[RMDB]
RNA sequence: GGGAACGACUCGAGUAGAGUCGAAAACAUUGUUCUGAUCAUCUGAAGAUCAGCUAUUAGAAGAGAAAGAUCAGUUAAGUCCUUUGGACCUGAUCAGCUUGAUACAAGAACUACUGAUUUCAACAUCAAAACGGGUGCUACUUCGGUAGCACCCGAACGAUAUUUUCAACUUCGGUUGAAAAUAUCGAAAAGAAACAACAACAACAAC
Reactivity to DMS in 0.01 (KOAc 150mM, MgCl2 10mM, bicine 150mM(pH8.5), 24C), signal-to-noise 2, nucleotides 027 to 156: c050a170u020u010g020u010u010c000u000g010a050u000c060a170u020c080u000g000a150a140g000a030u010c010a020g010c080u000a110u000u000a120g000a120a190g000a210g020a140a090a140g000a020u010c020a030g020u010u000a060a090g020u000c010c030u020u000u020g030g000a020c000c030u020g000a080u000c020a090g000c050u000u000g020a120u000a180c080a070a090g000a090a140c030u010a020c020u020g000a020u000u010u010c010a070a140c080a060u000c030a030a060a110a160c040g050g000g050u000g000c000u000a020c000u000u000c280g030g000u000a000g020c000a010c000c010c000g000a000a000
Reactivity to 2A3 in 0.01 (KOAc 150mM, MgCl2 10mM, bicine 150mM(pH8.5), 24C), signal-to-noise 6, nucleotides 027 to 156: c040a070u100u180g030u130u050c010u010g030a020u020c010a030u010c100u200g130a150a040g010a030u000c010a000g000c000u090a110u280u160a090g090a190a020g040a050g050a060a150a030g010a010u000c010a000g020u070u160a210a010g010u020c030c000u080u170u300g010g000a010c000c000u010g010a010u000c010a010g020c010u030u070g020a020u040a110c060a100a070g050a090a040c030u120a030c040u140g030a110u050u110u200c060a070a050c030a070u130c040a030a060a030a060c000g010g000g000u000g000c000u000a000c000u020u040c140g090g000u000a000g020c000a000c000c000c000g000a000a000
Structure probing data (DMS and 2A3) for a 207-nucleotide construct. For 2A3 the reverse transcriptase was SuperScript II with manganese. The data come from the RNA Mapping Database (RMDB), library M2RFPK. For 2A3, 3,466 sequencing reads were counted.